[RMDB]
Structure probing data (2A3) for a 207-nucleotide construct.
RNA sequence: GGGAACGACUCGAGUAGAGUCGAAAAUGGGAUGGCCUGAGGCUGGGAUUCACUGUGUAGCGGACCAGCUCAUGUUGACGGAACGUCCGCACUAAGCUUGCCAUCAAUAUGGGUGCCAUGGAGGAGUCCAAGGCAUUCAGGUUGGCUAAGGAGGGAUUCAAAAUUUUACGUUCGCGUAAAAUUUUGAAAAAGAAACAACAACAACAAC
Reactivity to 2A3 in 0.01 (KOAc 150mM, MgCl2 10mM, bicine 150mM(pH8.5), 24C), signal-to-noise 1, nucleotides 027 to 156: u130g000g000g030a030u020g070g020c040c070u000g020a050g040g070c020u010g020g050g000a070u120u060c030a040c130u040g040u020g060u230a000g020c030g000g000a020c000c000a040g020c020u000c040a120u180g100u130u110g030a050c040g020g040a160a140c110g010u000c000c010g000c000a030c010u090a030a000g030c000u050u050g020c000c000a010u080c040a060a020u210a120u100g010g000g000u000g000c000c000a010u030g000g010a020g060g020a040g060u010c000c000a010a000g000g040c020a000u040u040c010a020g000g000u000u000g010g020c040u080a020a020g050g000a020g000g000g020a010u030